This 177-nucleotide RNA was probed chemically with 2A3 and DMS. It was measured as part of the RMDB library OK2TRN.
RNA sequence: GGGAACGACUCGAGUAGAGUCGAAAACUCAAUGGCCAACCUGUGGACGCCAAGGAGAUGCAGGCCAGGUGCGCCUAUGUCCAGCAGGAUGACCUCUUUAUCGGCUCCCUAACGGCCAGGGAACACCCGCUUCACAAUAAUUCGUUAUUGUGAAGCGAAAAGAAACAACAACAACAAC
Reactivity to 2A3 in 0.01 (KOAc 150mM, MgCl2 10mM, bicine 150mM(pH8.5), 24C), signal-to-noise 7, nucleotides 027 to 126: c020u010c010a020a170u070g000g000c000c020a050a050c060c090u050g070u240g050g010a040c120g000c020c010a030a030g030g010a050g010a020u160g070c080a020g040g030c030c030a140g140g100u150g020c160g000c000c010u040a110u120g020u000c010c010a060g070c050a060g220g010a030u050g070a060c020c020u010c030u060u130u050a220u240c070g010g000c010u010c000c010c010u030a080a030c080g000g000c000c020a000g020g010g010a030a020c030a060c040c030
Reactivity to DMS in 0.01 (KOAc 150mM, MgCl2 10mM, bicine 150mM(pH8.5), 24C), signal-to-noise 6, nucleotides 027 to 126: c050u000c040a130a100u000g000g020c010c010a130a150c160c150u000g000u010g020g010a050c120g030c040c040a090a070g010g000a040g010a110u010g020c120a020g010g020c050c060a200g000g010u010g000c100g010c000c010u000a090u000g010u000c010c010a130g020c150a080g010g010a070u000g000a070c070c000u010c050u000u010u010a110u010c170g020g000c020u000c000c010c010u000a080a140c140g000g000c020c030a050g000g000g000a050a050c070a130c100c060
The reactions ran in a buffer of 150 mM KOAc, 10 mM MgCl2 and 150 mM bicine (pH 8.5), at 24 C. For 2A3 the reverse transcriptase was SuperScript II with manganese. The 2A3 profile rests on 13,844 reads.